[RMDB]
RNA sequence: GGGAACGACUCGAGUAGAGUCGAAAAAAGAAACAUUGUUUAUGCAAAGGCACUUCGCAAUGUGUGCUCAAACAUUGCUUAUUCAAACACGCUUCACAAUGUGCGACAAAGAAACAUGGUUAUAAGAUCCACUAAGUCGCCUUCGGGCGACUUAGAACAAUUACACGCCCUUCGGGGCGUGUAAUUGAAAAGAAACAACAACAACAAC
Reactivity to 2A3 in 0.01 (KOAc 150mM, MgCl2 10mM, bicine 150mM(pH8.5), 24C), signal-to-noise 1, nucleotides 027 to 156: a000a070g080a000a000a000c000a000u000u000g030u020u130u130a130u090g070c110a080a120a050g160g000c000a000c030u020u010c080g010c000a000a060u010g010u000g020u060g030c020u120c140a020a020a000c000a010u020u020g000c000u080u090a060u090u090c050a040a040a000c040a000c130g030c000u000u100c040a000c000a000a030u010g020u070g040c000g060a030c090a030a180a000g060a010a020a010c000a050u040g050g000u090u060a130u020a110a050g030a040u070c010c000a030c030u000a010a000g000u000c000g000c000c000u000u080c260g020g000g000c000g000a000c000u000u000a000g000a000a000